Conditions: 150 mM KOAc, 10 mM MgCl2 and 150 mM bicine (pH 8.5), 24 C. Chemical mapping of a 207-nucleotide RNA with 2A3 and DMS. The DMS profile rests on 2,614 reads. 2A3 adducts were read by reverse transcription with SuperScript II with manganese. For 2A3, 646 sequencing reads were counted. The data come from the RNA Mapping Database (RMDB), library OK3TST.
RNA sequence: GGGAACGACUCGAGUAGAGUCGAAAAGUAGCUAAAAUUGUCCCCUCGUUGACAGUAUCCACAGAGGCCAGAAACAACUCUGCUUGUUAUGAUAACUUUGGCUUCUUCAUGACUGCUAAAGAGUUGUCCCAGCACUUGGGGAGGCUGAGGCAGGCAGAAUUCACUGCUACUUCGGUAGCAGUGAAUUAAAAGAAACAACAACAACAAC
Reactivity to 2A3 in 0.01 (KOAc 150mM, MgCl2 10mM, bicine 150mM(pH8.5), 24C), signal-to-noise 1, nucleotides 027 to 156: g140u100a020g050c120u080a040a100a100a130u100u060g050u050c000c020c020c000u010c070g080u070u070g010a020c020a040g060u040a110u070c090c070a060c030a050g040a000g040g010c030c000a070g000a090a080a010c000a030a030c060u060c050u210g000c080u160u050g040u050u030a070u220g050a070u030a120a010c060u110u030u030g000g000c000u000u000c010u040u000c050a080u110g040a050c020u010g000c010u100a120a080a080g100a000g000u020u000g020u000c010c050c000a000g020c010a000c130u050u050g010g000g000g000a020g050g000c010u000g000a030g030g040c020a010g000g020c010a000g070
Reactivity to DMS in 0.01 (KOAc 150mM, MgCl2 10mM, bicine 150mM(pH8.5), 24C), signal-to-noise 1, nucleotides 027 to 156: g020u010a080g020c040u000a060a040a090a110u000u010g000u000c000c000c000c050u010c000g000u010u000g010a160c050a070g020u000a160u010c030c030a070c050a060g000a030g000g010c040c030a160g000a170a050a040c010a010a090c010u020c030u000g020c040u000u010g000u010u000a070u000g010a050u000a060a080c130u000u000u000g020g030c060u000u010c030u010u000c040a090u000g020a060c000u010g000c040u000a060a160a130g000a110g020u000u020g010u000c010c010c030a060g020c040a030c040u000u020g000g010g010g010a120g000g000c040u030g020a130g030g050c010a030g000g010c050a110g020